RNA sequence: GGGAACGACUCGAGUAGAGUCGAAAAACGGUAGCUACGGCUACCGAAUGACUUAUAUAUCUGUCAAUCCCCUGAGAGAUCACUGACGACUCCAUGUGUCUGAGCAAAGUGAGGAUACGUCCUCACACUGAGGCUGCCGAUUCGUCGGCAGCCUCAGAAAAGAAACAACAACAACAAC
Reactivity to 2A3 in 0.01 (KOAc 150mM, MgCl2 10mM, bicine 150mM(pH8.5), 24C), signal-to-noise 2, nucleotides 027 to 126: a000c000g000g000u000a000g000c010u020a040c300g160g000c000u000a000c000c000g010a000a050u070g020a000c000u070u000a060u030a010u020a070u300c040u060g000u000c000a020a110u020c000c000c020c000u090g110a130g030a000g000a120u030c000a020c090u160g070a040c040g070a070c020u040c030c020a070u060g050u000g000u090c020u100g140a000g100c040a030a090a070g000u010g000a000g000g000a040u050a070c220g100u000c000c000u000c020a000c000a000